[RMDB]
RNA sequence: GGGAACGACUCGAGUAGAGUCGAAAAUCAGUGCGUAGCUACCCAAAGCGAGGGCUAGCAGGACAUAGCCCGGUACCACCCCGAACGUGAGCCACCGUGGCGUGUCGCGAACGAUGCUCGGUUCGGGCCACGGAUUGAUAUUCGUAUCAAUCCGUGGAAAAGAAACAACAACAACAAC
Reactivity to 2A3 in 0.01 (KOAc 150mM, MgCl2 10mM, bicine 150mM(pH8.5), 24C), signal-to-noise 5, nucleotides 027 to 126: u080c020a010g040u030g050c060g100u110a020g010c010u070a100c000c000c030a080a070a000g080c050g030a120g000g010g000c000u000a010g010c150a150g050g110a040c050a090u020a020g000c000c000c000g020g030u040a050c010c030a040c000c020c000c010g000a010a010c060g180u130g050a000g000c040c090a050c000c030g020u040g100g020c040g040u110g080u170c100g000c010g020a040a000c010g040a040u130g010c000u000c000g010g000u000u010c000g000g000g000
Reactivity to DMS in 0.01 (KOAc 150mM, MgCl2 10mM, bicine 150mM(pH8.5), 24C), signal-to-noise 5, nucleotides 027 to 126: u010c100a110g000u000g010c160g020u000a060g010c010u010a090c010c010c010a110a140a070g010c050g030a090g000g000g010c050u000a020g030c060a210g000g020a120c130a110u000a040g010c000c010c010g010g000u010a070c080c060a060c090c010c000c010g000a020a010c030g020u010g020a040g000c120c100a030c030c000g030u010g020g020c030g020u000g020u010c080g020c010g010a080a060c020g020a040u000g000c000u000c010g020g010u000u000c010g000g000g000